[RMDB]
Chemical mapping of a 177-nucleotide RNA with DMS.
For DMS, 1,000 sequencing reads were counted.
The data come from the RNA Mapping Database (RMDB), library M2PK50.
RNA sequence: GGGAACGACUCGAGUAGAGUCGAAAACCGUUGCCGUUCGCGGCAACGGGAAGCAAGCAAGCAGCGCAACGAGACAAGACGAUAAUGAGUUCGCGCAUGCUGAAAAGCCACGCUUCGGCGUGGCUAAAUGUCUACCGAAGUUCGCUUCGGUAGACAUAAAAGAAACAACAACAACAAC
Reactivity to DMS in 0.01 (KOAc 150mM, MgCl2 10mM, bicine 150mM(pH8.5), 24C), signal-to-noise 2, nucleotides 027 to 126: c000c000g020u000u000g010c010c000g020u000u020c200g040c020g000g030c030a000a030c010g000g000g000a060a070g020c210a150a070g000c130a070a040g010c040a000g000c000g070c050a010a020c030g000a150g010a160c160a030a060g020a160c160g000a130u010a030a080u010g000a300g010u000u000c100g030c040g020c010a130u000g010c010u010g000a060a020a080a080g000c000c000a010c000g020c000u000u000c140g040g010c010g000u000g000g000c000u000a020a020